[RMDB]
RNA sequence: GGGAACGACUCGAGUAGAGUCGAAAAGGGGUCACGAGGAGAGCGAGUGGAGACAUGAAGUACUGAAGCCUCCACGGUACUUCAACAGCUCCAUCCGCUCGCGAAACUCGUGACGGAGGCACCCAAACGCUUCAGCGAGUUCGCUCGCUGAAGCGAACAAUUCAUGUUGAUUCGUCAACAUGAAUUGAAAAGAAACAACAACAACAAC
Reactivity to 2A3 in 0.01 (KOAc 150mM, MgCl2 10mM, bicine 150mM(pH8.5), 24C), signal-to-noise 2, nucleotides 027 to 156: g030g020g100g000u000c000a000c000g010a000g030g020a070g000a000g020c000g010a020g010u000g020g010a010g010a030c150a220u220g000a010a000g000u000a000c000u030g040a120a020g010c000c000u000c010c010a000c000g000g000u010a000c000u010u000c010a070a050c070a080g020c010u000c000c000a010u020c020c010g000c010u010c000g000c000g020a080a050a000c000u000c000g000u000g000a010c000g000g000a010g010g000c010a030c000c010c000a040a120a030c030g000c000u000u000c000a010g000c020g010a010g000u100u100c230g080c180u000c000g000c000u000g000a000a010g000c000g000a010a010
Reactivity to DMS in 0.01 (KOAc 150mM, MgCl2 10mM, bicine 150mM(pH8.5), 24C), signal-to-noise 1, nucleotides 027 to 156: g040g020g060g020u000c010a050c050g000a040g010g020a050g010a030g030c020g000a080g050u000g000g020a050g020a080c070a230u000g010a020a020g020u000a020c000u030g030a060a140g010c010c020u000c020c020a240c000g000g000u010a020c000u000u000c000a040a200c090a190g000c000u000c000c010a020u000c020c000g030c000u010c020g000c150g030a050a070a140c010u000c020g030u000g010a000c020g020g060a080g100g060c020a140c010c030c050a090a120a170c020g030c000u000u000c000a020g030c000g020a050g050u010u020c290g000c000u000c020g040c030u020g010a030a030g010c000g010a010a090